Chemical mapping of a 207-nucleotide RNA with 2A3. The RNA was probed in 150 mM KOAc, 10 mM MgCl2 and 150 mM bicine (pH 8.5) at 24 C. Values cover nucleotides 27 to 156. For 2A3 the reverse transcriptase was SuperScript II with manganese. It was measured as part of the RMDB library OK3TST.
[RMDB]
RNA sequence: GGGAACGACUCGAGUAGAGUCGAAAAAGUUUGAGGUUACUUGUGAUUGGCCACCAUUGCAUUCCAGCCUGGUGAGCCACUCUGAUGUGUCCAGUUGGCAAGUGAAUUCAUCAGGCCUAUGGGAGGUGUGGCAUCUGGGCCUGGCAGGUGGGUGAGAACGAUACCCAUAGUUCGCUAUGGGUAUCGUAAAAGAAACAACAACAACAAC
Reactivity to 2A3 in 0.01 (KOAc 150mM, MgCl2 10mM, bicine 150mM(pH8.5), 24C), signal-to-noise 2, nucleotides 027 to 156: a000g140u110u100u110g010a020g080g030u080u050a060c030u090u020g040u040g130a120u030u160g060g000c000c000a010c030c000a080u040u230g070c030a060u090u070c010c000a000g000c040c000u000g070g000u000g020a020g000c000c000a000c030u020c030u090g100a100u150g060u060g040u070c070c010a040g040u110u030g050g000c070a060a090g080u050g150a070a090u100u020c000a020u000c000a020g000g040c030c050u150a180u100g050g000g030a040g020g040u070g000u010g040g020c010a000u040c040u090g010g010g030c000c000u000g000g020c010a010g000g040u040g020g030g000u030g000a060g050a030